[RMDB]
RNA sequence: GGGAACGACUCGAGUAGAGUCGAAAAUUCCAUUUGAGUAUCCUGAAAACGGGCUUUUCAGCAUGGAACGUACAUAUUAAAUAGUGGGAGUGCAUAGUGGCCCGUAUAGCAGGCAUUAACAUUCCUGAAAACGUGAAAAGGUUCGCCUUUUCACGAAGAUCGUACAAUUGUUCGCAAUUGUACGAUCAAAAGAAACAACAACAACAAC
Reactivity to DMS in 0.01 (KOAc 150mM, MgCl2 10mM, bicine 150mM(pH8.5), 24C), signal-to-noise 2, nucleotides 027 to 156: u010u000c000c000a110u000u000u000g020a130g020u010a100u010c020c020u020g030a040a090a130a060c030g020g020g020c040u020u000u020u000c110a230g020c060a030u000g010g020a180a080c060g020u000a140c100a120u010a130u000u000a080a130a120u030a180g030u000g010g020g000a250g000u000g030c010a100u000a140g020u000g000g020c000c000c010g050u000a010u000a160g040c050a010g010g010c030a070u000u000a070a070c030a100u000u000c010c030u010g000a070a080a140a190c020g010u000g000a010a000a000a000g020g020u000u000c300g020c000c000u000u000u000u000c010a000c010g010a030a050
Reactivity to 2A3 in 0.01 (KOAc 150mM, MgCl2 10mM, bicine 150mM(pH8.5), 24C), signal-to-noise 4, nucleotides 027 to 156: u040u020c020c010a020u080u060u060g050a050g050u060a050u120c000c010u020g040a040a040a000a020c010g000g020g000c010u100u090u100u140c090a020g010c010a020u030g030g060a110a020c020g100u160a030c050a060u180a110u180u300a160a150a130u180a070g040u090g000g050g010a070g000u000g020c070a060u050a130g100u030g040g000c000c000c000g000u000a000u010a000g020c010a000g000g020c000a000u010u030a010a030c010a060u070u080c000c000u050g050a080a070a030a050c010g000u000g000a010a000a000a000g030g010u050u060c150g120c000c000u010u000u000u000c000a000c000g000a000a000